[RMDB]
RNA sequence: GGGAACGACUCGAGUAGAGUCGAAAACCCGUUUUGUUCGCAAAACGGGACUCAUCUUUGCUUGGCAGCAUAGCAGGAGUUGGCUGGACUGCUGGCUUAUCCUUGGAGGCAGUUUCGACUGCCUCAACCGAAAUCAUAUUUUCGAAUAUGAUUUCGGAAAAGAAACAACAACAACAAC
Reactivity to 2A3 in 0.01 (KOAc 150mM, MgCl2 10mM, bicine 150mM(pH8.5), 24C), signal-to-noise 8, nucleotides 027 to 126: c000c000c000g000u020u000u000u000g020u010u050c190g000c100a000a010a000a000c000g000g000g030a050c020u030c060a170u040c070u060u150u090g010c030u070u170g060g000c030a010g000c010a090u090a070g000c030a030g030g210a160g180u240u140g150g000c010u020g000g040a120c020u030g020c000u010g050g000c000u030u110a100u110c010c030u020u110g190g000a010g000g000c000a000g000u000u030u130c150g050a020c000u020g020c000c000u000c000a000a000
Reactivity to DMS in 0.01 (KOAc 150mM, MgCl2 10mM, bicine 150mM(pH8.5), 24C), signal-to-noise 8, nucleotides 027 to 126: c010c000c000g010u000u000u000u000g010u000u010c200g020c010a000a010a010a010c000g010g000g010a090c070u000c090a100u010c080u000u000u000g010c020u000u010g030g010c140a040g010c080a100u010a020g010c050a050g010g000a100g020u010u010g010g010c020u000g000g010a150c050u000g000c010u000g000g000c020u000u000a070u010c040c030u000u000g020g010a020g010g010c000a010g010u000u000u010c170g010a030c000u000g000c000c000u000c000a020a070